[RMDB]
Background:
This 177-nucleotide RNA was probed chemically with DMS and 2A3. The DMS profile rests on 4,952 reads. For 2A3 the reverse transcriptase was SuperScript II with manganese.
RNA sequence: GGGAACGACUCGAGUAGAGUCGAAAAACACAAAUUGAUCUGACACUGGCCGAUUGGGCGCUGGAACGCGGCGACUACAGUGAAGCGCUGGCGGGCUAUCAGCGUAUUCGGGCGCGCGAGCCGCAAACAUACGCUUUUGUUUCGACAAAAGCGUAUGAAAAGAAACAACAACAACAAC
Reactivity to DMS in 0.01 (KOAc 150mM, MgCl2 10mM, bicine 150mM(pH8.5), 24C), signal-to-noise 4, nucleotides 027 to 126: a080c100a060c160a080a050a120u000u010g010a080u000c030u010g020a150c060a050c050u010g010g010c020c020g000a130u010u000g010g000g010c040g010c020u010g020g020a090a070c080g020c020g020g000c020g000a070c050u010a100c120a110g000u010g040a100a090g010c020g000c020u000g020g020c060g000g010g010c080u020a070u000c010a020g000c020g030u000a090u000u000c040g010g020g020c020g010c040g030c040g000a070g010c010c030g010c090a080a070a150
Reactivity to 2A3 in 0.01 (KOAc 150mM, MgCl2 10mM, bicine 150mM(pH8.5), 24C), signal-to-noise 3, nucleotides 027 to 126: a020c060a000c030a070a070a080u070u130g040a040u050c030u070g040a030c020a020c110u040g050g020c010c000g080a090u060u140g080g030g020c010g000c020u050g000g060a060a020c030g030c000g030g030c000g080a090c030u160a060c040a080g080u060g240a080a010g030c010g000c040u030g140g050c030g010g030g040c020u060a070u160c030a010g000c010g010u010a040u030u100c030g020g010g000c050g000c000g000c040g060a020g030c020c010g020c030a020a010a050